[RMDB]
RNA sequence: GGGAACGACUCGAGUAGAGUCGAAAAGCGCGUUAAUACGGCCGUUAUGCCUUCUUGCCCAACAAUAUGAGGUCGUAGCGUGUGGGGGCAGGGACACCGUCGUUUUGUUCAAGAAGGUAUAGUGCGCCGAGGCAAAAAGAUUCGUCUUUUUGCCUCGAAAAGAAACAACAACAACAAC
Reactivity to 2A3 in 0.01 (KOAc 150mM, MgCl2 10mM, bicine 150mM(pH8.5), 24C), signal-to-noise 2, nucleotides 027 to 126: g020c040g000c040g070u050u140a120a010u120a160c040g020g000c020c000g030u020u020a010u020g000c000c000u020u020c000u000u010g030c070c000c000a030a030c060a050a040u120a060u180g070a020g010g030u040c070g020u070a050g080c060g010u080g000u100g040g050g020g030g010c000a040g060g000g000a000c020a010c040c000g120u090c010g010u040u040u030u090g000u050u030c000a000a000g010a010a000g000g000u010a010u000a010g040u020g030c040g000c000
Reactivity to DMS in 0.01 (KOAc 150mM, MgCl2 10mM, bicine 150mM(pH8.5), 24C), signal-to-noise 4, nucleotides 027 to 126: g010c050g020c070g010u010u010a100a110u000a130c130g000g000c010c010g000u000u000a010u000g010c000c000u000u000c000u010u000g010c300c060c070a100a050c090a060a070u000a070u000g010a140g020g000u000c090g010u000a060g010c050g020u010g010u000g010g000g000g000g020c040a040g000g010g000a060c070a040c050c040g000u000c030g010u000u000u000u000g010u000u000c010a010a020g000a010a010g010g010u000a010u000a020g030u000g010c150g010c050
Chemical mapping of a 177-nucleotide RNA with 2A3 and DMS. For DMS the reverse transcriptase was MarathonRT. The 2A3 profile rests on 4,173 reads. The reactions ran in a buffer of 150 mM KOAc, 10 mM MgCl2 and 150 mM bicine (pH 8.5), at 24 C. The DMS profile rests on 5,103 reads. The data come from the RNA Mapping Database (RMDB), library OK2TRN. Values are in units of 0.01, from 0 to 300, in steps of 10.